Record summary
Chemical mapping of a 207-nucleotide RNA with 2A3. For 2A3 the reverse transcriptase was SuperScript II with manganese. For 2A3, 1,127 sequencing reads were counted.
[RMDB]
RNA sequence: GGGAACGACUCGAGUAGAGUCGAAAACAACCCAACUCCUACUCAAUACGUCCUCGUCGUACACAACGGUAACAUGUUUUCCGAACAUCCGCGCUUGGGUAUACGAGUAUACACCUUACCCAACCCUCCAACCACCUAAAGUUCGCUUUAGGUGGAAGAAGUCGCUAUGGUUCGCCAUAGCGACUUCAAAAGAAACAACAACAACAAC
Reactivity to 2A3 in 0.01 (KOAc 150mM, MgCl2 10mM, bicine 150mM(pH8.5), 24C), signal-to-noise 2, nucleotides 027 to 156: c000a030a060c000c000c030a040a020c080u120c050c000u070a060c050u100c110a010a100u070a100c030g070u060c010c030u050c030g100u030c040g040u070a080c060a020c000a090a060c040g070g030u110a130a030c070a150u060g030u050u070u060u010c050c040g020a060a040c030a050u090c020c030g110c010g020c120u030u000g020g000g000u020a050u000a040c040g010a000g060u000a000u030a010c070a060c030c000u040u050a040c020c000c000a030a040c010c010c000u000c000c000a040a050c000c010a000c000c010u010a030a010a000g010u050u050c120g110c090u010u000u000a010g020g000u000g000g000a000a010